Record summary
An RNA of 177 nucleotides, treated with DMS and read out base by base. DMS adducts were read by reverse transcription with MarathonRT. The reactions ran in a buffer of 150 mM KOAc, 10 mM MgCl2 and 150 mM bicine (pH 8.5), at 24 C.
RNA sequence: GGGAACGACUCGAGUAGAGUCGAAAAUACAAGUACGAAAGUACAAGCCUUAUCAGUUGGGCCUUCUGGUCAAAUUAGCGCUCACCCAGGAGGUCCUUCGCAUGAGGUGGACAAGCGCUAAAAGAAAUACAACAUGACCGUUCGCGGUCAUGUUGUAAAAAGAAACAACAACAACAAC
Reactivity to DMS in 0.01 (KOAc 150mM, MgCl2 10mM, bicine 150mM(pH8.5), 24C), signal-to-noise 1, nucleotides 027 to 126: u010a180c120a060a170g000u000a000c000g000a210a080a300g000u000a000c010a050a120g030c000c000u000u000a040u000c200a280g000u000u010g010g010g050c000c000u000u000c000u000g030g000u000c040a060a080a090u000u000a010g000c000g010c050u000c090a060c300c000c000a070g000g000a020g000g010u000c000c000u000u000c100g000c200a050u000g000a030g000g000u020g040g000a130c220a030a000g000c050g050c040u010a020a020a050a150g000a110a130a030